[RMDB]
RNA sequence: GGGAACGACUCGAGUAGAGUCGAAAAAUGCGCAGUCGUAGGCUGCGGCGAAUCAGACCCAGAACUCAUGAACUUCGCACUCGACAACGGCAACUUCACAAUCCGCUGCAACGACCAUAACACCGACUUUAGCGUCAAAGUGUACGACAACCGCACCUAUAGUACAAGGGUUCGCCCUUGUACUAUAAAAAGAAACAACAACAACAAC
Reactivity to DMS in 0.01 (KOAc 150mM, MgCl2 10mM, bicine 150mM(pH8.5), 24C), signal-to-noise 3, nucleotides 027 to 156: a090u010g010c010g030c050a100g040u000c070g050u010a100g040g000c020u000g000c040g030g000c040g000a080a120u000c060a130g000a230c020c010c030a150g020a100a110c060u000c030a090u000g010a080a100c080u010u000c030g000c030a070c020u000c040g010a110c040a080a040c020g010g000c050a050a060c070u010u010c050a050c050a060a130u000c040c030g000c010u000g000c050a080a080c040g010a120c000c030a080u010a050a080c040a080c040c040g020a060c050u000u000u010a110g020c040g040u010c030a060a050a100g000u000g000u000a040c040g010a080c050a060a080c060c000g000c010a060c050c060
Reactivity to 2A3 in 0.01 (KOAc 150mM, MgCl2 10mM, bicine 150mM(pH8.5), 24C), signal-to-noise 8, nucleotides 027 to 156: a010u120g000c010g000c010a010g020u030c040g120u170a060g060g030c010u010g000c020g020g020c010g020a030a070u140c040a040g070a160c000c020c010a040g050a090a070c040u060c060a090u100g050a070a060c040u060u030c070g020c030a040c030u070c040g100a050c050a120a040c030g040g020c020a040a040c040u100u100c040a030c020a090a120u040c020c020g000c050u040g000c020a040a050c050g070a060c040c000a020u060a130a040c030a020c030c020g070a040c070u130u170u190a050g030c030g030u020c020a010a060a060g030u040g040u060a030c010g010a010c040a060a030c030c010g010c020a020c000c010
An RNA of 207 nucleotides, treated with DMS and 2A3 and read out base by base.
For DMS, 6,838 sequencing reads were counted.
Values are in units of 0.01, from 0 to 300, in steps of 10.
The data come from the RNA Mapping Database (RMDB), library OK3TST.
For DMS the reverse transcriptase was MarathonRT.
The 2A3 profile rests on 7,212 reads.
Conditions: 150 mM KOAc, 10 mM MgCl2 and 150 mM bicine (pH 8.5), 24 C.